[RMDB]
About this RNA:
This 177-nucleotide RNA was probed chemically with 2A3. The 2A3 profile rests on 646 reads.
RNA sequence: GGGAACGACUCGAGUAGAGUCGAAAAGCAGCAAAAUAACCAAAAGUAAUGACUUUCGUUUUAAUUUCUUAAGAUGAAAUAUAAAUGAAAACCUGUUAUACAUAGGAUUAUCUAUUUCCGUUAUAAUUGGAUACGAAAAUUUCGAUUUUCGUAUCCAAAAAGAAACAACAACAACAAC
Reactivity to 2A3 in 0.01 (KOAc 150mM, MgCl2 10mM, bicine 150mM(pH8.5), 24C), signal-to-noise 2, nucleotides 027 to 126: g010c030a000g020c070a070a080a080a160u070a030a100c020c000a170a020a020a020g050u090a000a130u040g040a050c000u000u030u000c010g030u000u000u030u090a100a090u090u000u000c000u100u070a230a030g090a160u140g020a030a020a000u110a000u000a020a000a000u000g000a000a000a060a050c050c030u050g020u030u050a050u010a070c010a010u070a030g000g020a020u070u070a050u070c090u060a140u080u050u000c030c030g020u170u100a140u070a180a140u040